RNA sequence: GGGAACGACUCGAGUAGAGUCGAAAAUGUCUAAGCCAAGAAAGGCUUCAUAGUAAAGCCAAAAUAUUUGACUCAUAUCUUCACUAUGGAUGAAUCAGUUUAUUCUUGGACAGGCCGAUAGUCUGGCUGUACCAGAGUAGUUCGCUACUCUGGUACAAAAAGAAACAACAACAACAAC
Reactivity to DMS in 0.01 (KOAc 150mM, MgCl2 10mM, bicine 150mM(pH8.5), 24C), signal-to-noise 4, nucleotides 027 to 126: u010g010u000c030u010a210a140g010c030c010a020a040g000a060a090a200g020g010c010u000u000c050a080u010a130g010u010a110a040a030g020c160c010a100a080a050a080u010a050u000u000u000g020a030c050u000c090a040u000a090u000c040u000u010c180a100c200u010a070u010g010g000a050u000g000a020a030u000c040a020g010u000u000u020a120u040u000c010u000u000g010g000a080c080a070g010g000c010c120g000a110u010a050g000u000c050u010g020g010c150
Reactivity to 2A3 in 0.01 (KOAc 150mM, MgCl2 10mM, bicine 150mM(pH8.5), 24C), signal-to-noise 2, nucleotides 027 to 126: u110g010u000c010u000a080a060g010c000c010a020a010g000a050a060a020g000g000c000u020u020c000a140u090a140g120u190a130a010a000g000c000c000a000a080a020a030u180a040u040u080u070g020a020c000u000c040a050u080a260u160c050u150u090c070a050c170u130a140u180g000g050a040u050g040a040a050u010c000a010g010u020u030u090a140u040u000c000u020u010g010g020a040c010a010g020g000c000c000g100a110u080a050g100u030c020u040g020g010c020

This 177-nucleotide RNA was probed chemically with DMS and 2A3. DMS adducts were read by reverse transcription with MarathonRT. The DMS profile rests on 2,793 reads. It was measured as part of the RMDB library OK2TST. The RNA was probed in 150 mM KOAc, 10 mM MgCl2 and 150 mM bicine (pH 8.5) at 24 C.